This 177-nucleotide RNA was probed chemically with DMS and 2A3. For DMS the reverse transcriptase was MarathonRT. Conditions: 150 mM KOAc, 10 mM MgCl2 and 150 mM bicine (pH 8.5), 24 C.

[RMDB]
RNA sequence: GGGAACGACUCGAGUAGAGUCGAAAAUCUCACCAGAGAAGCGGCCAUCGUGAUGUUGGCCGAUGCAGUGGAGGCUGCGGUACGCGCCCUCUCGGGCAAACCUUCGCAUGCGGCCAUCGAAAAGCGAAGUUGAAACAAGGUUCGCCUUGUUUCAACUAAAAGAAACAACAACAACAAC
Reactivity to DMS in 0.01 (KOAc 150mM, MgCl2 10mM, bicine 150mM(pH8.5), 24C), signal-to-noise 3, nucleotides 027 to 126: u000c010u010c010a160c200c100a150g000a140g020a090a110g010c020g000g010c010c010a040u000c030g060u000g040a110u030g020u000u000g000g020c000c000g010a030u000g020c050a130g020u010g010g020a020g000g020c010u010g030c040g020g030u010a070c170g010c110g000c050c000c010u000c160u010c230g020g000g010c040a080a110a080c080c060u000u000c020g010c010a060u000g020c020g010g000c020c010a050u010c040g000a060a040a100a140g010c060g020a060
Reactivity to 2A3 in 0.01 (KOAc 150mM, MgCl2 10mM, bicine 150mM(pH8.5), 24C), signal-to-noise 2, nucleotides 027 to 126: u020c010u010c000a040c030c050a070g040a010g010a220a060g050c020g030g020c040c000a020u030c040g090u160g170a120u300g030u060u000g000g000c000c010g000a010u010g000c020a040g050u090g090g070a030g080g000c030u050g030c030g030g110u140a050c090g000c010g030c050c000c000u060c060u080c090g000g000g000c000a100a030a050c010c010u070u050c020g020c030a010u180g020c000g080g030c010c000a030u070c070g070a090a070a000a000g070c070g030a080

Background:
The 2A3 profile rests on 2,498 reads. 2A3 is a SHAPE reagent: it acylates the 2'-hydroxyl of flexible nucleotides of all four kinds. It was measured as part of the RMDB library OK2TST.